[RMDB]
RNA sequence: GGGAACGACUCGAGUAGAGUCGAAAAUUGCUACCAUUAUUGUGUUUCUGUGUGCUGUACUGAUGUAUUUGUGUUUACCUACAUUUUCUAUGGCACCUGUUGAAUUUUAUGAAGACCGCAUCUUGGAAAGCUCCCCAGUUCGCUGGGGAGAAAAGAAACAACAACAACAAC
Reactivity to DMS in 0.01 (KOAc 150mM, MgCl2 10mM, bicine 150mM(pH8.5), 24C), signal-to-noise 4, nucleotides 027 to 129: u030u020g020c050u020a110c020c010a110u020u040a170u000u060g020u020g050u000u010u010c070u020g000u010g050u010g010c030u000g000u020a040c110u000g020a050u020g030u030a040u030u030u000g030u030g000u000u070u040a100c090c100u000a040c000a050u000u000u000u000c060u020a000u020g020g000c020a060c050c040u000g030u040u040g020a120a090u000u050u020u050a060u070g020a110a090g020a090c000c060g000c090a050u020c080u000u000g020g030a060a050a100g000
Reactivity to 2A3 in 0.01 (KOAc 150mM, MgCl2 10mM, bicine 150mM(pH8.5), 24C), signal-to-noise 5, nucleotides 027 to 129: u130u110g000c040u050a070c000c000a060u040u050a090u100u140g050u000g030u030u100u010c070u020g090u030g000u010g050c000u000g000u000a000c030u030g010a010u020g050u060a110u060u120u100g180u010g080u090u170u110a060c040c000u000a020c020a030u050u060u030u040c040u000a020u010g020g000c000a000c000c010u010g030u080u050g050a100a080u040u030u060u090a150u130g100a070a020g010a050c010c010g010c010a000u020c000u020u000g020g000a060a030a030g000

This 170-nucleotide RNA was probed chemically with DMS and 2A3. For 2A3 the reverse transcriptase was SuperScript II with manganese. Reactivities are rounded to 0.1 and cut off at 0 and 3. The DMS profile rests on 18,572 reads. Conditions: 150 mM KOAc, 10 mM MgCl2 and 150 mM bicine (pH 8.5), 24 C. For 2A3, 8,987 sequencing reads were counted.